Conditions: 150 mM KOAc, 10 mM MgCl2 and 150 mM bicine (pH 8.5), 24 C. This 177-nucleotide RNA was probed chemically with DMS and 2A3. The 2A3 profile rests on 1,586 reads. For 2A3 the reverse transcriptase was SuperScript II with manganese. DMS adducts were read by reverse transcription with MarathonRT.
RNA sequence: GGGAACGACUCGAGUAGAGUCGAAAAAAAAGAUAUGGACUCUGUAUCCUUGGAUUUAACGGUACUAUUAAAUCGGAAACGAUUUAACGAAUACCGUUUGUCAGGAUGACAGAGUCCUAAGUCAAAACUUAAAACAAUACUUCGGUAUUGUUUUAAGAAAAGAAACAACAACAACAAC
Reactivity to DMS in 0.01 (KOAc 150mM, MgCl2 10mM, bicine 150mM(pH8.5), 24C), signal-to-noise 2, nucleotides 027 to 126: a070a080a090a070g000a080u010a300u010g010g010a030c000u000c000u000g000u010a120u000c000c000u010u000g020g000a000u000u000u000a000a000c020g010g010u000a000c090u000a190u010u000a000a000a000u000c000g010g000a170a100a230c000g000a000u000u000u000a000a000c080g020a100a050u000a000c000c010g010u000u000u010g000u000c010a020g010g020a010u010g010a010c010a000g010a020g010u000c010c000u010a000a080g000u000c040a090a060a120a240
Reactivity to 2A3 in 0.01 (KOAc 150mM, MgCl2 10mM, bicine 150mM(pH8.5), 24C), signal-to-noise 1, nucleotides 027 to 126: a050a000a000a000g070a050u120a060u120g010g000a000c000u000c000u030g000u010a010u050c000c010u120u240g250g010a120u300u300u080a010a000c010g000g000u000a050c030u020a030u090u010a010a000a020u010c020g030g030a040a100a050c000g000a020u000u000u000a030a010c030g020a270a150u010a040c010c000g000u020u010u000g000u000c000a000g000g000a010u070g070a010c000a030g020a000g010u000c010c010u000a010a000g000u000c010a000a000a100a140